[RMDB]
RNA sequence: GGGAACGACUCGAGUAGAGUCGAAAAAGUACUUACGAGUACAGCUUGUUCGUCUACCCUGUGGUACCGAGCUGUGUCUGAGUGAUAAGCAAACACGAUCGGUCACUGGGUAAAGGACCUUGCUCAAUGACUAUUUAUUCUUCGGAAUAAAUAGUCAAAAAGAAACAACAACAACAAC
Reactivity to DMS in 0.01 (KOAc 150mM, MgCl2 10mM, bicine 150mM(pH8.5), 24C), signal-to-noise 8, nucleotides 027 to 126: a080g010u010a030c000u010u010a120c150g010a040g020u000a000c050a070g010c100u000u000g020u000u000c020g010u020c060u000a050c000c000c000u000g010u000g010g010u020a070c010c000g010a010g000c120u030g020u000g000u000c030u010g000a090g020u020g020a170u050a130a160g000c020a020a020a010c010a010c010g000a070u000c000g000g010u000c000a020c010u000g000g000g010u000a010a030a160g000g000a020c020c070u000u000g010c000u000c090a130a130
Reactivity to 2A3 in 0.01 (KOAc 150mM, MgCl2 10mM, bicine 150mM(pH8.5), 24C), signal-to-noise 9, nucleotides 027 to 126: a000g060u070a050c030u080u070a050c200g040a010g000u010a020c020a030g020c070u050u080g010u020u040c030g050u010c040u000a010c000c000c000u010g000u000g020g060u090a040c000c000g010a010g030c210u120g080u000g000u000c030u040g050a080g100u150g120a190u130a300a050g060c010a020a040a000c000a000c010g030a040u010c000g000g010u010c000a000c010u020g000g000g000u000a010a000a000g000g000a000c000c030u020u050g000c010u010c040a040a210